[RMDB]
RNA sequence: GGGAACGACUCGAGUAGAGUCGAAAAGAUAUGGAUCGGUCGCUAUGGAGCGUCCCCCAUCGGAAACGAUACGCUAUGAAGUAGCGAGCCGAUCCUAAGUCAAAACCUGCCACUUCGGUGGCAGGAAGUUUAAAUGUAGGUUCGCCUACAUUUAAACAAAAGAAACAACAACAACAAC
Reactivity to 2A3 in 0.01 (KOAc 150mM, MgCl2 10mM, bicine 150mM(pH8.5), 24C), signal-to-noise 2, nucleotides 027 to 126: g030a030u090a050u150g020g010a010u000c010g000g000u010c000g000c020u010a030u070g060g110a130g010c000g130u250c110c010c000c000c000a120u100c090g090g030a120a100a060c020g000a070u070a110c030g000c000u140a300u300g000a070a000g040u030a020g010c020g040a090g070c000c000g000a000u000c000c000u010a040a010g020u000c010a010a020a020a080c010c000u000g000c000c000a010c020u040u040c230g090g000u000g000g000c000a000g000g000a010a000
Reactivity to DMS in 0.01 (KOAc 150mM, MgCl2 10mM, bicine 150mM(pH8.5), 24C), signal-to-noise 7, nucleotides 027 to 126: g000a040u010a300u010g000g000a010u010c010g010g010u000c000g000c000u000a010u000g010g000a010g010c000g010u000c060c010c010c030c130a060u000c040g010g000a120a060a160c030g010a020u010a040c000g020c010u000a250u020g000a100a180g010u000a010g000c000g010a060g020c000c000g010a010u000c000c000u010a010a060g000u000c040a120a070a090a130c010c000u000g000c000c000a010c000u000u010c160g020g020u000g000g010c000a000g010g000a010a020
Description: The data come from the RNA Mapping Database (RMDB), library TTRDEL. Chemical mapping of a 177-nucleotide RNA with 2A3 and DMS. High 2A3 reactivity points to a flexible backbone, as in loops and unpaired stretches. Conditions: 150 mM KOAc, 10 mM MgCl2 and 150 mM bicine (pH 8.5), 24 C.